[RMDB]
RNA sequence: GGGAACGACUCGAGUAGAGUCGAAAAGCGUACUACUCUUACACAGAGCAAUGACGUGGGAACAAUGAGUGUCCCAAAUAGGACACUCUAUCCCAUAAGACAGCUCUGUUAAAGAGUAUCGCAAAGAUACCAACCCGCUUCGGCGGGUUGGUAUCAACGAUCAAUGUCACUUCGGUGACAUUGAUCGAAAAGAAACAACAACAACAAC
Reactivity to 2A3 in 0.01 (KOAc 150mM, MgCl2 10mM, bicine 150mM(pH8.5), 24C), signal-to-noise 1, nucleotides 027 to 156: g000c000g050u090a030c080u000a000c000u000c000u020u010a070c040a000c000a110g010a020g020c020a060a300u040g040a000c090g010u000g000g000g000a170a140c170a100a250u240g000a000g000u000g010u090c000c000c050a100a120a060u300a090g010g000a000c000a000c000u010c000u010a010u010c010c000c000a010u010a000a030g090a010c060a070g100c000u000c010u000g010u030u050a010a050a000g000a000g000u010a000u030c000g000c000a090a090a000g000a000u000a010c000c000a000a000c110c020c000g000c100u070u070c280g130g000c000g000g000g080u000u000g000g010u010a000u000c000a000a000